RNA sequence: GGGAACGACUCGAGUAGAGUCGAAAAGGAUGGACUCAUCAAACAGAAGGCCGUCGCUGUGCCUGUGCGGCAGGAGGACUCCGUCAUCGCUGCUGCUCUUUUCAGAGCGAAGAAAGCAGUCGACGCCCAGCAUACCACUGUUCGCAGUGGUAUGCUGAAAAGAAACAACAACAACAAC
Reactivity to 2A3 in 0.01 (KOAc 150mM, MgCl2 10mM, bicine 150mM(pH8.5), 24C), signal-to-noise 3, nucleotides 027 to 126: g000g000a020u060g000g070a090c060u060c110a070u030c060a150a090a060c040a050g170a150a070g100g010c110c000g020u040c010g000c050u050g080u110g060c000c020u060g030u070g020c040g010g010c020a030g040g030a020g030g020a010c010u040c090c070g010u010c010a040u040c040g060c160u010g000c020u050g020c000u040c000u110u140u080u120c120a020g050a030g030c060g020a090a040g110a090a150a010g020c010a000g030u050c040g010a010c010g010c000c020
Reactivity to DMS in 0.01 (KOAc 150mM, MgCl2 10mM, bicine 150mM(pH8.5), 24C), signal-to-noise 3, nucleotides 027 to 126: g000g000a020u000g010g010a140c090u000c040a120u000c070a100a140a100c120a080g010a140a090g000g020c040c040g040u010c100g010c050u000g010u000g010c080c030u000g010u000g030c070g000g020c070a050g000g010a050g020g000a040c100u010c080c060g000u000c060a060u000c050g000c000u000g000c000u010g010c000u010c010u010u010u010u010c160a070g010a100g000c050g010a090a100g000a050a130a070g000c020a020g000u000c030g000a030c080g000c030c020